The record gives the reactivity of an RNA of 177 nucleotides to DMS and 2A3.
2A3 is a SHAPE reagent: it acylates the 2'-hydroxyl of flexible nucleotides of all four kinds.
For 2A3, 829 sequencing reads were counted.
It was measured as part of the RMDB library OK2TRN.
The reactions ran in a buffer of 150 mM KOAc, 10 mM MgCl2 and 150 mM bicine (pH 8.5), at 24 C.
The DMS profile rests on 5,855 reads.

RNA sequence: GGGAACGACUCGAGUAGAGUCGAAAAAGUAUCACUUUAGAUGUAAUUUGUUCUAAAGGAACAUAUAUUCGUGUGCUAGGUGAAGAUAUUGGUGAGGUACUUGGUUGUGGUGGUCAUUUAACCAUGACAUAAUGCUGCGAUUCGUCGCAGCAUUAUGAAAAGAAACAACAACAACAAC
Reactivity to DMS in 0.01 (KOAc 150mM, MgCl2 10mM, bicine 150mM(pH8.5), 24C), signal-to-noise 4, nucleotides 027 to 126: a080g020u000a080u010c040a140c010u000u000u000a020g010a050u000g010u010a100a130u000u000u000g010u010u000c000u000a050a070a060g020g010a060a030c070a040u000a060u000a110u000u000c050g020u000g020u010g020c060u000a050g010g020u000g010a050a080g010a060u000a070u000u000g010g010u010g010a090g010g000u000a040c060u010u010g010g000u000u000g010u000g010g020u000g010g010u010c080a050u000u000u000a100a080c090c040a060u000g010a160
Reactivity to 2A3 in 0.01 (KOAc 150mM, MgCl2 10mM, bicine 150mM(pH8.5), 24C), signal-to-noise 2, nucleotides 027 to 126: a000g090u150a130u070c000a030c070u100u120u050a010g000a030u010g050u120a090a150u090u110u300g050u030u000c020u090a050a050a090g080g010a000a000c000a000u210a010u050a090u170u150c080g020u150g050u010g150c070u060a070g090g040u050g050a060a030g050a060u030a000u190u070g050g020u070g010a050g000g050u040a050c000u040u010g030g010u020u060g080u050g080g040u050g020g010u040c020a000u050u020u000a000a050c000c040a020u070g020a010